This 177-nucleotide RNA was probed chemically with DMS.
High DMS reactivity at an A or C suggests that its Watson-Crick edge is free.
For DMS the reverse transcriptase was MarathonRT.
For DMS, 1,500 sequencing reads were counted.
RNA sequence: GGGAACGACUCGAGUAGAGUCGAAAACGGACCAGAGCGGGGAGGAGUUUGCGAGGGGAGGCGCUUGGGAGGACUCCCCCAGUUCUGUUAAGAGCUGGGCACAAAGAGCCCUUUGCACUCCAGCCGCCAUAACGCGCAGUUUCGACUGCGCGUUAUGAAAAGAAACAACAACAACAAC
Reactivity to DMS in 0.01 (KOAc 150mM, MgCl2 10mM, bicine 150mM(pH8.5), 24C), signal-to-noise 2, nucleotides 027 to 126: c130g000g000a140c050c040a160g010a140g020c020g000g000g000g000a160g010g000a020g000u000u010u020g050c000g020a020g010g000g020g000a070g000g000c120g050c050u010u010g000g010g000a080g010g010a090c160u000c040c040c000c010c010a010g000u000u000c000u000g000u030u010a070a030g010a050g020c010u000g000g010g030c150a050c110a050a080a080g010a130g000c000c010c000u000u000u010g000c030a080c050u000c010c020a240g030c000c010g020c020